[RMDB]
RNA sequence: GGGAACGACUCGAGUAGAGUCGAAAAAUUUUGCAAAACCGUUUGCAGGUUGCCGAUGCUAAAGAUGCGGACUACUUGAUCAAACGUCAUCUCCGUCCAUCGCCGCGUAUUUUACAGGGGCAGGCACAUGCACCUGUUAUUUCGAUAACAGGUGCAUAAAAGAAACAACAACAACAAC
Reactivity to DMS in 0.01 (KOAc 150mM, MgCl2 10mM, bicine 150mM(pH8.5), 24C), signal-to-noise 8, nucleotides 027 to 126: a110u000u010u000u010g010c070a080a060a120a130c150c100g010u000u000u000g010c030a050g020g010u000u000g010c050c020g020a110u000g010c090u010a040a060a080g010a070u000g010c020g000g000a080c100u000a030c070u000u010g000a080u010c070a050a060a100c130g000u010c070a050u000c040u000c040c050g000u000c070c030a040u000c070g020c030c030g010c070g010u000a050u000u000u010u010a050c080a120g020g000g010g010c040a050g000g010c100a080c190
Reactivity to 2A3 in 0.01 (KOAc 150mM, MgCl2 10mM, bicine 150mM(pH8.5), 24C), signal-to-noise 4, nucleotides 027 to 126: a000u080u090u070u110g020c020a030a030a080a090c080c040g050u030u050u070g020c020a020g060g020u030u030g000c000c010g060a070u060g020c070u150a140a110a110g100a080u220g060c010g020g080a120c020u040a010c010u080u050g030a040u170c050a100a040a010c040g040u010c020a040u020c030u000c030c010g040u000c030c020a080u090c050g000c040c020g120c030g040u040a150u030u200u060u070a040c030a020g050g020g000g000c010a010g000g010c020a040c000
Structure probing data (DMS and 2A3) for a 177-nucleotide construct. Values are in units of 0.01, from 0 to 300, in steps of 10. 2A3 adducts were read by reverse transcription with SuperScript II with manganese. The 2A3 profile rests on 5,183 reads. It was measured as part of the RMDB library OK2TRN. The RNA was probed in 150 mM KOAc, 10 mM MgCl2 and 150 mM bicine (pH 8.5) at 24 C. DMS adducts were read by reverse transcription with MarathonRT.